Description:
The record gives the reactivity of an RNA of 207 nucleotides to 2A3 and DMS. DMS adducts were read by reverse transcription with MarathonRT. It was measured as part of the RMDB library RNAMAK. Conditions: 150 mM KOAc, 10 mM MgCl2 and 150 mM bicine (pH 8.5), 24 C.
RNA sequence: GGGAACGACUCGAGUAGAGUCGAAAAACGAUUUUCGAAUCGUCUGGAAGGGGUCGUUCGCGUCGACAUGUCCCAAGGAGCUGAAGCCUCCACGGCUCCCUGGGACAACAGCGACGUCGAACGACGGAGGCACCCAAAUGACCGACUUCGGUCGGAAGUAGAUUAAAUCUUUCGAGAUUUAAUCUACAAAAGAAACAACAACAACAAC
Reactivity to 2A3 in 0.01 (KOAc 150mM, MgCl2 10mM, bicine 150mM(pH8.5), 24C), signal-to-noise 4, nucleotides 027 to 156: a000c000g010a030u050u050u110u160c160g090a020a010u010c010g060u020c100u100g090g100a170a080g030g030g000g010u000c000g000u010u020c000g010c010g020u000c010g010a110c100a230u300g010u000c000c000c000a000a010g010g000a000g010c010u010g010a060a000g000c000c000u000c000c000a020c020g000g010c000u010c000c000c050u000g010g000g000a000c000a010a010c010a020g020c000g000a000c000g010u230c060g000a000a000c000g000a000c000g000g000a000g000g000c000a010c000c000c000a020a090a080u210g090a080c020c000g010a010c020u050u080c280g060g000u000c000g000g000a070a000
Reactivity to DMS in 0.01 (KOAc 150mM, MgCl2 10mM, bicine 150mM(pH8.5), 24C), signal-to-noise 2, nucleotides 027 to 156: a040c040g010a050u010u000u020u000c230g030a010a040u000c000g040u000c030u010g000g020a100a100g020g030g020g030u010c010g020u000u010c010g000c000g000u000c000g010a060c090a210u000g040u000c010c020c030a020a020g050g000a040g040c010u000g010a050a110g010c020c000u000c000c020a300c000g010g010c000u000c000c000c010u030g020g020g020a000c000a020a040c040a160g000c000g010a020c010g040u000c000g010a020a040c000g000a000c010g020g010a050g040g050c000a130c000c000c000a040a150a180u000g000a140c020c000g000a110c040u010u000c230g030g000u000c000g030g020a090a200